[RMDB]
RNA sequence: GGGAACGACUCGAGUAGAGUCGAAAAGCCGGAUCGACGGGAGCGCCGUGACCAGGGUGUCCUGGCCUUUGCGCGGCACCAACCGCGACAGACACACUACCGUGGGCCGCUCGCCUAGCCGAUAGCGCCACGGUGAUAUGUUCGCAUAUCACCGUGGAAAAGAAACAACAACAACAAC
Reactivity to DMS in 0.01 (KOAc 150mM, MgCl2 10mM, bicine 150mM(pH8.5), 24C), signal-to-noise 6, nucleotides 027 to 126: g020c050c040g020g000a080u000c020g010a060c040g000g000g000a070g020c060g010c050c040g020u010g010a100c020c020a030g010g000g020u010g010u000c030c030u000g010g000c060c040u010u000u000g000c040g010c010g010g010c050a130c160c240a140a190c010c010g000c010g000a110c060a060g000a070c080a070c070a080c110u020a070c100c050g000u000g010g010g000c070c060g010c030u000c050g010c010c060u000a090g020c040c010g000a040u010a080g010c090g000
Reactivity to 2A3 in 0.01 (KOAc 150mM, MgCl2 10mM, bicine 150mM(pH8.5), 24C), signal-to-noise 5, nucleotides 027 to 126: g050c020c010g010g050a090u070c010g050a040c050g020g010g020a020g010c030g000c020c030g030u050g090a210c010c030a030g030g050g050u180g120u170c010c040u030g050g000c020c040u060u060u090g010c020g000c000g020g010c030a070c060c020a050a070c010c000g000c010g040a080c010a010g030a010c010a000c000a010c080u170a110c070c070g030u050g020g010g020c050c040g000c010u020c010g210c010c010u020a030g020c020c000g040a060u050a030g050c040g030
Description: This 177-nucleotide RNA was probed chemically with DMS and 2A3. The DMS profile rests on 7,899 reads. For 2A3 the reverse transcriptase was SuperScript II with manganese. Conditions: 150 mM KOAc, 10 mM MgCl2 and 150 mM bicine (pH 8.5), 24 C.